[RMDB]
RNA sequence: GGGAACGACUCGAGUAGAGUCGAAAAGAUAUGGAUAGGACUUUUGACGAGCUACGGGUCGGAAACGACCCAUAGCUCGAUAAGUCCGUCCUAAGUCAAAAUCAACUGAGGUUCGCCUCAGUUGAAAGGCCAUCUAUAAGUUCGCUUAUAGAUGGCCAAAAGAAACAACAACAACAAC
Reactivity to DMS in 0.01 (KOAc 150mM, MgCl2 10mM, bicine 150mM(pH8.5), 24C), signal-to-noise 2, nucleotides 027 to 126: g010a030u010a300u010g000g000a010u000a130g050g010a010c010u000u010u000u010g020a140c200g000a020g000c000u000a010c030g000g000g010u000c010g000g010a050a090a150c020g000a010c000c000c000a010u000a000g000c010u010c000g000a020u000a020a010g010u000c000c000g010u000c000c000u000a110a140g000u000c010a120a120a110a150u000c010a000a020c000u000g000a020g010g020u000u010c220g040c010c000u000c000a010g000u000u000g000a020a030a070
Reactivity to 2A3 in 0.01 (KOAc 150mM, MgCl2 10mM, bicine 150mM(pH8.5), 24C), signal-to-noise 1, nucleotides 027 to 126: g020a030u090a030u120g000g010a010u100a300g060g000a000c000u130u030u170u300g280a210c160g000a010g000c000u000a030c040g000g000g000u030c000g020g000a060a000a030c000g020a010c030c000c000a000u000a000g000c000u020c000g010a000u000a000a000g020u000c000c000g010u000c000c000u000a060a010g020u000c050a070a020a020a300u010c000a000a000c010u010g000a010g090g020u120u120c280g110c020c000u000c010a020g020u000u010g000a000a000a000